[RMDB]
RNA sequence: GGGAACGACUCGAGUAGAGUCGAAAACUCAAUCACUACGGUGAUUGAGAAUGCUUACGCCUCAAUCAAGCUUGAGUCGAGUGCCUCUAGCAGAUAUAGACUGAAACAUUUAGUAUGGUCAAGCAGGGAGCAACAGCUCGAGUACGCUCGAGCUGAAGCAGCAGUUUUACUUCGGUAAAACUGCUGCAAAAGAAACAACAACAACAAC
Reactivity to 2A3 in 0.01 (KOAc 150mM, MgCl2 10mM, bicine 150mM(pH8.5), 24C), signal-to-noise 1, nucleotides 027 to 156: c000u010c000a000a000u000c000a000c000u100a040c300g100g020u000g000a000u000u000g000a000g000a010a030u100g030c020u030u030a040c010g040c000c020u010c010a120a230u240c070a100a060g000c000u010u000g010a000g000u040c010g040a030g130u050g070c010c010u070c000u080a020g000c020a020g170a030u060a090u090a160g070a040c040u000g040a040a190a000c010a100u090u090u210a060g020u040a100u230g080g000u050c000a030a020g030c010a020g010g070g030a050g020c000a010a000c000a000g060c020u000c000g010a000g000u010a020c220g060c040u000c000g000a000g030c000u010g000a000a000
Conditions: 150 mM KOAc, 10 mM MgCl2 and 150 mM bicine (pH 8.5), 24 C. Chemical mapping of a 207-nucleotide RNA with 2A3. Values cover nucleotides 27 to 156. For 2A3 the reverse transcriptase was SuperScript II with manganese.